[RMDB]
RNA sequence: GGGAACGACUCGAGUAGAGUCGAAAACUCCACGCGCUAAUUCCCGGGGGCCCCACAGCCCCCACACUCCCUCUCGGCCCGAGGCUCUGAAGGGCACAACCAGGGCUCCACACUGAAGCAAUGGCCUACACCACAACUAUUUCGAUAGUUGUGGUGUAAAAGAAACAACAACAACAAC
Reactivity to 2A3 in 0.01 (KOAc 150mM, MgCl2 10mM, bicine 150mM(pH8.5), 24C), signal-to-noise 4, nucleotides 027 to 126: c030u010c010c000a030c030g020c010g010c020u070a090a050u050u050c010c010c010g010g000g000g000g000c030c000c020c010a070c020a030g030c000c000c000c000c000a000c000a000c000u020c000c010c000u020c000u010c020g050g000c000c010c010g040a040g040g010c020u000c020u080g070a100a060g020g010g000c020a010c010a040a030c010c010a020g000g040g000c010u020c010c000a050c010a020c040u070g070a050a020g030c040a040a100u080g040g020c010c000u000
Reactivity to DMS in 0.01 (KOAc 150mM, MgCl2 10mM, bicine 150mM(pH8.5), 24C), signal-to-noise 2, nucleotides 027 to 126: c020u000c030c050a090c010g000c020g060c050u000a090a100u010u000c000c000c000g020g010g000g000g000c030c000c120c130a090c100a140g000c000c040c010c000c000a020c060a060c200u000c000c030c050u020c030u020c040g020g000c000c090c030g000a070g000g000c020u000c020u010g000a010a150g000g010g050c090a050c030a030a100c150c040a030g000g000g000c000u010c020c060a060c070a050c020u040g040a090a080g030c080a110a140u000g000g040c060c010u000
An RNA of 177 nucleotides, treated with 2A3 and DMS and read out base by base. For 2A3 the reverse transcriptase was SuperScript II with manganese. For 2A3, 6,445 sequencing reads were counted. Conditions: 150 mM KOAc, 10 mM MgCl2 and 150 mM bicine (pH 8.5), 24 C.